The data come from the RNA Mapping Database (RMDB), library OK2TST. Structure probing data (2A3 and DMS) for a 177-nucleotide construct. Values cover nucleotides 27 to 126. For 2A3 the reverse transcriptase was SuperScript II with manganese.
[RMDB]
RNA sequence: GGGAACGACUCGAGUAGAGUCGAAAAAGUAGUUUGUAUCAUAAAACCAUUGAACUAGGGAGAAGAAAAGCCCUUGGGGUCAUCUUGUCUCCAUUCCUGCCUCAAUGGUUGAUCUGAGAGGUGAGGAACGCAUACUAGUAUUCGUACUAGUAUGCGUAAAAGAAACAACAACAACAAC
Reactivity to 2A3 in 0.01 (KOAc 150mM, MgCl2 10mM, bicine 150mM(pH8.5), 24C), signal-to-noise 4, nucleotides 027 to 126: a000g130u100a030g000u030u110u160g090u060a160u100c030a020u080a110a050a040a080c010c010a030u010u080g030a030a000c030u050a090g010g040g030a040g010a050a020g030a020a080a040a010g010c040c030c000u060u110g170g030g000g070u100c020a050u020c040u010u100g070u040c020u000c010c000a000u070u030c000c010u020g010c000c020u020c000a030a010u030g020g000u020u140g020a040u050c010u020g030a020g010a010g040g050u120g160a050g020g020a000
Reactivity to DMS in 0.01 (KOAc 150mM, MgCl2 10mM, bicine 150mM(pH8.5), 24C), signal-to-noise 6, nucleotides 027 to 126: a110g020u010a070g010u010u010u000g010u000a070u000c050a070u000a060a050a060a090c030c030a040u000u000g000a030a060c070u010a060g010g010g010a040g000a050a040g000a030a050a110a190g010c010c010c010u010u010g040g020g020g020u000c040a270u020c030u000u000g000u000c000u000c010c070a140u000u000c020c010u000g000c100c030u000c010a010a080u000g000g000u010u010g000a090u010c090u000g000a300g010a040g000g020u000g000a070g000g000a080

Conditions: 150 mM KOAc, 10 mM MgCl2 and 150 mM bicine (pH 8.5), 24 C. For DMS, 9,543 sequencing reads were counted.